Notes: Chemical mapping of a 177-nucleotide RNA with 2A3 and DMS. For DMS, 12,995 sequencing reads were counted. DMS adducts were read by reverse transcription with MarathonRT. Conditions: 150 mM KOAc, 10 mM MgCl2 and 150 mM bicine (pH 8.5), 24 C. For 2A3, 8,662 sequencing reads were counted. Reactivities are given for positions 27 through 126. For 2A3 the reverse transcriptase was SuperScript II with manganese.

RNA sequence: GGGAACGACUCGAGUAGAGUCGAAAAACUAUUUGUUCUAUAGCAAAGAAACCCGAAACACAGCAUAUAUUUGUUAUAUAUGCUUUGUGGAACACAGCUGUUAGGACGUGAGCCAUCAGGGUCCAAAGAUAAUACCGAGUUUCGACUCGGUAUUAUCAAAAGAAACAACAACAACAAC
Reactivity to 2A3 in 0.01 (KOAc 150mM, MgCl2 10mM, bicine 150mM(pH8.5), 24C), signal-to-noise 8, nucleotides 027 to 126: a010c100u090a110u090u090u110g030u020u010c060u050a070u110a070g020c030a080a100a050g030a080a130a070c010c000c020g030a020a040a000c010a000c010a000g000c010a000u010a000u010a010u030u130u150g200u300u030a010u010a000u020a000u010g000c000u010u020u010g000u000g030g010a030a020c100a000c010a040g010c020u050g030u170u060a020g030g010a010c050g060u080g040a020g040c020c030a070u070c050a070g050g030g030u020c010c030a040a050a020
Reactivity to DMS in 0.01 (KOAc 150mM, MgCl2 10mM, bicine 150mM(pH8.5), 24C), signal-to-noise 5, nucleotides 027 to 126: a100c070u010a060u000u020u030g010u000u000c070u030a090u010a040g010c040a070a090a090g000a090a110a100c030c020c050g030a130a110a050c010a010c050a010g000c020a000u000a000u000a000u000u010u020g000u020u020a090u000a000u000a000u010g010c000u000u020u010g010u000g000g010a150a050c090a060c250a080g010c060u000g000u000u010a050g000g000a030c050g020u030g020a050g010c050c060a070u010c060a070g000g020g000u000c030c050a040a100a090